[RMDB]
RNA sequence: GGGAACGACUCGAGUAGAGUCGAAAAGUAUCUUUUGAGGAGUUGACGUAGAGCACUUUGAAGCCGAUGCUCGAAAAAACUCCGAGCCUUCUUCGAAGCUCUGUCGUCUUUCCCGACCUCAUCGGACCGCAAAUUAUUUCGAGACCGGAAUACAUUGUCUCAUACAGAGGUUCGCCUCUGUAUGAGAAAAAGAAACAACAACAACAAC
Reactivity to 2A3 in 0.01 (KOAc 150mM, MgCl2 10mM, bicine 150mM(pH8.5), 24C), signal-to-noise 2, nucleotides 027 to 156: g080u070a130u280c040u010u130u060u040g040a020g030g010a090g010u100u030g090a010c030g000u010a000g010a000g000c060a030c090u000u000u030g020a030a000g030c040c100g110a140u140g010c030u000c000g070a040a020a020a010a010a000c090u040c060c020g000a010g000c000c000u020u010c000u000u010c020g020a030a030g050c010u000c000u000g220u210c020g010u000c000u030u020u010c010c000c000g010a020c000c030u030c000a010u040c020g000g010a030c030c030g050c090a100a070a120u130u140a100u070u140u040c130g020a060g050a110c160c090g040g060a040a090u210a090c080a070u230u300g060
Reactivity to DMS in 0.01 (KOAc 150mM, MgCl2 10mM, bicine 150mM(pH8.5), 24C), signal-to-noise 1, nucleotides 027 to 156: g010u000a040u000c030u010u000u000u000g010a040g000g000a100g000u000u000g010a050c020g040u000a060g000a040g030c030a070c060u020u000u010g030a060a070g020c070c020g020a050u000g040c020u010c000g000a000a050a100a140a110a090c110u000c010c020g010a040g010c010c010u010u000c010u000u000c010g000a080a040g010c010u000c000u010g000u000c000g020u000c030u000u000u010c010c010c040g000a110c040c020u000c010a020u000c040g030g020a100c050c040g010c070a070a090a190u010u000a140u000u000u000c040g000a250g020a250c050c050g000g000a050a050u000a080c070a180u010u000g010
Conditions: 150 mM KOAc, 10 mM MgCl2 and 150 mM bicine (pH 8.5), 24 C. This 207-nucleotide RNA was probed chemically with 2A3 and DMS. For DMS the reverse transcriptase was MarathonRT. Source: RMDB library OK3TST, as collected in RNAgym. For 2A3, 788 sequencing reads were counted.